[RMDB]
RNA sequence: GGGAACGACUCGAGUAGAGUCGAAAAUGGAAGCACUAUCGAAGCAGAUCGUCGCCAGUGUCGCCAAGCAGACCGGCGGAGUGCUGCGCGGAUAAAGCAAUGAAAGCCUGAGCCCGCCGAUUGGCGAAUGGUGAUUUUAGUUCGCUAAAAUCACCAUAAAAGAAACAACAACAACAAC
Reactivity to 2A3 in 0.01 (KOAc 150mM, MgCl2 10mM, bicine 150mM(pH8.5), 24C), signal-to-noise 2, nucleotides 027 to 126: u080g010g030a110a000g040c040a010c070u030a030u100c080g080a130a010g080c030a030g020a070u030c020g070u010c010g020c010c050a060g030u050g030u150c000g030c010c030a070a040g060c060a040g050a120c000c040g000g000c030g000g020a090g010u150g050c040u020g000c050g000c030g010g030a060u090a100a080a010g000c050a000a050u110g080a140a070a000g000c020c030u040g020a020g040c000c010c030g000c010c010g130a210u030u170g000g000c010g010a010
Reactivity to DMS in 0.01 (KOAc 150mM, MgCl2 10mM, bicine 150mM(pH8.5), 24C), signal-to-noise 4, nucleotides 027 to 126: u000g000g020a150a060g030c040a070c080u000a060u000c050g010a130a160g010c070a060g000a080u010c090g010u000c010g000c030c040a060g030u010g000u000c020g000c020c060a050a110g000c140a110g010a100c110c030g000g010c010g020g000a050g010u010g010c010u000g000c140g010c090g000g010a110u000a040a110a110g030c090a100a080u010g000a080a100a210g010c020c030u000g020a150g010c040c000c030g000c020c010g010a130u010u010g000g020c020g000a080